Notes: Conditions: 150 mM KOAc, 10 mM MgCl2 and 150 mM bicine (pH 8.5), 24 C. Chemical mapping of a 207-nucleotide RNA with DMS and 2A3. Reactivities are rounded to 0.1 and cut off at 0 and 3. Reactivities are given for positions 27 through 156. Source: RMDB library RNAMAK, as collected in RNAgym.
[RMDB]
RNA sequence: GGGAACGACUCGAGUAGAGUCGAAAAUAGGUGUUCGCACCUAACUCAGGAUAUGGAGACUAGAGGCUCUUGGAUUUACAGGACAUUUUCGGAAACGAACCAUCCUGUUGUCAGAGCCGAUUGGUCUCCUAAGUCAGUCACUCUCGUUCGCGAGAAAUUAUGAAUGGAUGUUCGCAUCCAUUCAUAAAAAAGAAACAACAACAACAAC
Reactivity to DMS in 0.01 (KOAc 150mM, MgCl2 10mM, bicine 150mM(pH8.5), 24C), signal-to-noise 3, nucleotides 027 to 156: u000a020g020g030u000g010u010u000c150g010c020a080c000c000u000a030a100c050u000c040a100g010g030a150u000a180u000g000g000a050g020a050c010u000a060g020a300g020g020c000u010c000u000u000g030g020a080u010u000u000a030c010a040g010g010a060c040a280u010u000u010u010c020g020g010a130a160a280c030g040a030a030c300c300a160u000c010c000u000g000u010u000g010u000c020a060g000a060g040c020c010g000a060u000u000g000g000u000c000u000c000c000u000a000a070g010u000c030a090g000u000c040a070c070u000c010u010c000g010u000u010c200g020c030g020a030g000a060a080a210
Reactivity to 2A3 in 0.01 (KOAc 150mM, MgCl2 10mM, bicine 150mM(pH8.5), 24C), signal-to-noise 5, nucleotides 027 to 156: u100a000g000g000u010g020u070u080c250g060c050a010c000c000u020a090a040c060u060c110a090g150g020a110u070a050u200g020g000a010g000a010c030u070a060g030a070g140g010c010u000c020u120u240g140g010a070u300u300u100a020c000a020g000g010a000c050a150u050u070u040u090c070g030g030a070a100a060c050g000a020a030c070c000a000u020c000c000u000g010u020u020g010u020c010a000g000a000g010c000c000g000a000u000u010g000g010u000c000u000c000c000u000a000a000g000u000c040a000g050u060c030a050c130u040c010u010c010g060u120u090c140g020c030g150a000g000a020a080a090